An RNA of 177 nucleotides, treated with DMS and 2A3 and read out base by base. The reactions ran in a buffer of 150 mM KOAc, 10 mM MgCl2 and 150 mM bicine (pH 8.5), at 24 C. The data come from the RNA Mapping Database (RMDB), library OK2TRN. For DMS, 3,610 sequencing reads were counted.
RNA sequence: GGGAACGACUCGAGUAGAGUCGAAAAGCGGCAGCACUGGUGGCCAGCAUUGAAACCAUACUGGCGACCCUGGGCUACAAGAACGUCCUCGUUCGACCCACAACCCGUUCGGAUGGGCGGAGCGUGACAAAUAUCGUGGGUUCGCCCACGAUAUUUGAAAAGAAACAACAACAACAAC
Reactivity to DMS in 0.01 (KOAc 150mM, MgCl2 10mM, bicine 150mM(pH8.5), 24C), signal-to-noise 4, nucleotides 027 to 126: g000c130g000g010c040a020g010c030a050c040u000g000g020u000g000g020c010c040a010g020c040a050u010u000g010a190a100a150c210c170a070u000a040c030u000g000g010c010g000a040c060c010c150u000g000g010g020c020u000a030c040a090a110g020a050a050c060g000u000c080c120u010c070g010u000u000c000g000a130c060c020c000a040c070a040a250c090c010c030g000u010u000c010g020g000a140u010g020g000g010c020g000g010a050g010c220g020u000g000a210
Reactivity to 2A3 in 0.01 (KOAc 150mM, MgCl2 10mM, bicine 150mM(pH8.5), 24C), signal-to-noise 3, nucleotides 027 to 126: g040c070g060g000c050a010g040c020a040c080u070g020g020u040g120g000c010c000a000g010c030a040u030u140g110a200a050a010c110c000a000u050a070c010u010g010g010c030g060a020c010c010c030u030g010g010g000c010u020a020c030a060a080g010a070a030c020g070u120c010c050u060c030g010u010u020c040g030a180c000c030c010a050c010a020a070c020c020c010g040u100u090c090g160g150a130u110g180g010g000c020g020g020a040g030c030g000u080g050a010